This 177-nucleotide RNA was probed chemically with 2A3 and DMS. Reactivities are given for positions 27 through 126.
RNA sequence: GGGAACGACUCGAGUAGAGUCGAAAAUGCUAUCGCCGAUCCUAACCCCCGUUUCGUCUUGUACGAAUCACUCUUGAACGAACUUAAAAUUGCAUCAUACGUCACGGUAGGUUUCGUCUUGCUGUGCCAGACCUUCCGUAUUCGUACGGAAGGUCUGAAAAGAAACAACAACAACAAC
Reactivity to 2A3 in 0.01 (KOAc 150mM, MgCl2 10mM, bicine 150mM(pH8.5), 24C), signal-to-noise 4, nucleotides 027 to 126: u060g000c000u020a050u170c040g010c020c000g020a080u050c010c000u020a070a100c000c000c000c000c060g010u000u010u020c040g000u020c010u050u150g050u080a020c020g030a050a030u050c010a040c030u040c020u010u070g070a100a030c030g040a020a010c030u120u130a060a090a090a130u110u130g050c010a050u040c020a040u100a080c040g020u030c070a000c000g000g040u030a010g060g000u030u140u120c070g060u040c040u010u030g020c030u020g020u030g030c030
Reactivity to DMS in 0.01 (KOAc 150mM, MgCl2 10mM, bicine 150mM(pH8.5), 24C), signal-to-noise 2, nucleotides 027 to 126: u030g000c080u000a040u020c070g010c050c020g060a040u000c000c000u030a120a140c030c000c010c030c010g020u000u000u010c020g000u000c070u010u010g020u010a010c050g020a050a030u020c060a080c100u000c030u020u020g000a140a080c100g020a030a000c110u000u020a030a080a090a080u000u000g030c040a040u010c080a160u000a070c090g000u010c020a060c030g000g010u000a010g000g000u000u060u000c110g010u000c000u080u000g010c010u000g020u000g020c110